[RMDB]
RNA sequence: GGGAACGACUCGAGUAGAGUCGAAAAGCAAAUAUUGUCUUAAUUACUUAGGCUAAAAGAAAUAAGUAUUAAAGCUGGACAAGGCAUCGACAUUUGAUACAAAUAUUGAUCAAUGGAUGUCUUAUUUAAACCUCAUCCGGCUUCGGCCGGAUGAGAAGUGAUAGGAUCAGUUCGCUGAUCCUAUCACAAAAGAAACAACAACAACAAC
Reactivity to 2A3 in 0.01 (KOAc 150mM, MgCl2 10mM, bicine 150mM(pH8.5), 24C), signal-to-noise 1, nucleotides 027 to 156: g050c040a020a120a150u190a050u120u150g030u060c020u040u080a080a140u150u020a060c010u040u070a010g050g010c010u070a300a000a080a020g070a020a170a050u080a020a010g000u020a070u030u150a120a070a000g010c060u070g050g010a050c030a110a000g000g000c000a000u000c030g080a080c010a080u160u030u130g010a010u160a090c050a000a090a070u290a170u300u210g010a000u000c000a000a020u000g000g000a000u000g000u000c000u000u000a000u000u040u040a100a020a000c000c000u000c000a010u020c000c000g000g000c000u020u010c050g060g030c000c000g040g000a000u010g000a000g000a000a010